[RMDB]
RNA sequence: GGGAACGACUCGAGUAGAGUCGAAAAGAUAUGGAACCCAUCGACAUGCUGGAGUACGUUUCGGAAACGAAAUGAAACAGCAACAGCGAGUGGGUUCCUAAGUCAAAUCUGCAGUUCGCUGCAGAAAGGGAUGUUGUAAGUUCGCUUACAACAUCCCAAAAGAAACAACAACAACAAC
Reactivity to DMS in 0.01 (KOAc 150mM, MgCl2 10mM, bicine 150mM(pH8.5), 24C), signal-to-noise 2, nucleotides 027 to 126: g030a030u000a300u010g020g010a020a000c000c000c000a080u000c010g020a110c130a230u000g000c000u030g000g060a110g000u000a090c250g000u000u000u010c000g000g000a080a060a290c010g000a010a010a000u000g000a180a130a200c010a000g000c030a010a060c220a180g000c000g000a000g030u000g020g010g000u000u000c000c010u010a000a130g010u010c050a100a060a100u000c000u000g000c020a010g020u000u000c210g010c010u000g000c010a000g010a020a070a120
Reactivity to 2A3 in 0.01 (KOAc 150mM, MgCl2 10mM, bicine 150mM(pH8.5), 24C), signal-to-noise 2, nucleotides 027 to 126: g010a030u120a030u110g000g000a000a010c010c000c000a010u020c000g140a160c060a120u090g010c010u000g000g050a030g030u000a050c100g020u020u000u000c040g040g000a080a100a030c010g010a030a010a040u170g000a040a010a050c010a000g100c010a010a030c000a030g150c020g030a040g300u120g010g000g000u010u000c000c000u010a020a000g020u000c000a000a030a190u040c010u000g010c030a000g000u070u130c240g070c150u010g010c000a000g000a030a000a000

Notes:
An RNA of 177 nucleotides, treated with DMS and 2A3 and read out base by base. It was measured as part of the RMDB library TTRDEL. Values cover nucleotides 27 to 126. 2A3 adducts were read by reverse transcription with SuperScript II with manganese. For DMS, 956 sequencing reads were counted.